[RMDB]
RNA sequence: GGGAACGACUCGAGUAGAGUCGAAAAUCUACUGGACCUCUUUGCAGUACCGCAGUACAACUGUGAGGGUGCUUCUCAAGCAGAGCGCUCCCACGGUCUCUUCCUAGGAUAGCCCUGGGAGCACUGCGCACUAGUUCUACUUCGGUAGAACUAGUGCAAAAGAAACAACAACAACAAC
Reactivity to 2A3 in 0.01 (KOAc 150mM, MgCl2 10mM, bicine 150mM(pH8.5), 24C), signal-to-noise 2, nucleotides 027 to 126: u010c010u060a070c050u100g100g000a070c040c010u070c030u080u120u130g040c030a000g020u040a080c000c050g000c050a020g030u080a100c040a130a050c110u050g020u040g040a070g040g040g000u020g020c000u120u050c020u010c060a100a100g000c060a010g030a070g060c090g000c010u000c000c000c000a010c010g040g040u000c010u030c020u090u080c030c040u060a080g040g080a020u040a040g030c000c000c020u010g010g010g010a000g030c010a000c010u000g000c000
Reactivity to DMS in 0.01 (KOAc 150mM, MgCl2 10mM, bicine 150mM(pH8.5), 24C), signal-to-noise 2, nucleotides 027 to 126: u000c050u000a060c110u000g010g020a070c110c000u000c050u000u030u000g040c030a030g030u000a100c110c110g020c100a070g010u000a120c150a110a040c060u000g010u010g000a060g030g000g000u000g000c080u010u000c020u000c060a160a200g020c040a030g000a040g030c050g040c000u000c000c000c010a020c230g010g000u000c080u000c090u000u010c010c060u050a170g000g000a080u000a080g000c110c000c020u000g000g000g000a040g030c120a040c020u000g030c000
An RNA of 177 nucleotides, treated with 2A3 and DMS and read out base by base. The RNA was probed in 150 mM KOAc, 10 mM MgCl2 and 150 mM bicine (pH 8.5) at 24 C. The DMS profile rests on 1,310 reads. The 2A3 profile rests on 2,293 reads.